[RMDB]
RNA sequence: GGGAACGACUCGAGUAGAGUCGAAAAACUGGAGCGAGUACUAGGAGGUUGUAGGGAGGAAUACCAGGUAUUACAGAAGGGAUCACUUAGAGCUUGGUGAGUGGGUGGAUAAGUAGGUGCCUGAGAGUGAGGGAACUGUAUUCGUACAGUUCCCUCAAAAAGAAACAACAACAACAAC
Reactivity to DMS in 0.01 (KOAc 150mM, MgCl2 10mM, bicine 150mM(pH8.5), 24C), signal-to-noise 1, nucleotides 027 to 126: a080c090u000g020g000a130g050c080g020a080g040u000a110c090u010a080g010g000a070g030g010u000u000g030u010a070g020g000g010a090g000g000a060a110u000a070c030c030a060g000g010u000a080u010u000a100c130a100g040a070a040g010g020g010a080u000c060a070c060u010u000a090g020a050g020c040u000u000g000g030u000g000a080g000u010g000g000g010u000g030g000a080u010a020a060g030u010a040g000g030u010g020c020c000u000g010a130g010a080g020

Chemical mapping of a 177-nucleotide RNA with DMS. Reactivities are given for positions 27 through 126. It was measured as part of the RMDB library OK2TRN. The RNA was probed in 150 mM KOAc, 10 mM MgCl2 and 150 mM bicine (pH 8.5) at 24 C. In probing experiments dimethyl sulfate is read out at A N1 and C N3, which are open when not base-paired. DMS adducts were read by reverse transcription with MarathonRT.